[RMDB]
RNA sequence: GGGAACGACUCGAGUAGAGUCGAAAAACACGUUAGACGAUACUACGGGGCUAACAUUCCAAGCGAUAACAAAACCGCAAACGGUAGUAAACGAAGCGUUAGUUAAUAUGAAAGGUUUAACGGAAAUUAGUUUUCCUUUUGCGCUUGGAAAAAGAAACCACGGAUUGAUAUUCGUAUCAAUCCGUGGAAAAGAAACAACAACAACAAC
Reactivity to DMS in 0.01 (KOAc 150mM, MgCl2 10mM, bicine 150mM(pH8.5), 24C), signal-to-noise 1, nucleotides 027 to 156: a090c060a040c090g050u030u010a000g010a040c010g010a160u000a090c000u010a070c080g000g040g050g000c020u000a020a000c060a300u000u000c010c030a060a050g030c020g120a190u010a040a100c160a020a050a080a000c060c000g010c040a040a110a120c030g020g030u000a060g000u020a050a110a090c040g000a190a050g010c080g060u010u010a080g000u000u000a120a030u000a140u020g020a030a070a080g110g000u000u000u010a040a070c030g010g000a000a030a080u020u010a120g010u020u000u000u000c000c000u000u000u040u040g010c020g020c000u000u000g000g000a000a030a050a080a040g000a110a020a280
Reactivity to 2A3 in 0.01 (KOAc 150mM, MgCl2 10mM, bicine 150mM(pH8.5), 24C), signal-to-noise 2, nucleotides 027 to 156: a000c030a010c080g000u000u010a020g000a020c020g040a110u040a070c070u020a000c070g010g030g040g070c030u040a060a000c020a060u010u020c000c000a000a000g010c000g010a010u020a090a060c020a030a100a010a000c050c030g000c050a120a150a140c050g020g060u090a050g070u120a160a080a110c020g000a000a000g010c000g000u010u020a010g000u000u040a150a040u240a150u290g070a030a020a000g030g000u010u220u070a010a000c030g000g050a030a140a140u140u050a090g060u000u000u000u020c000c000u000u020u000u050g070c000g000c010u000u000g000g000a000a020a020a020a020g000a010a030a000
The record gives the reactivity of an RNA of 207 nucleotides to DMS and 2A3. The RNA was probed in 150 mM KOAc, 10 mM MgCl2 and 150 mM bicine (pH 8.5) at 24 C. For 2A3, 928 sequencing reads were counted. 2A3 adducts were read by reverse transcription with SuperScript II with manganese. For DMS, 1,595 sequencing reads were counted.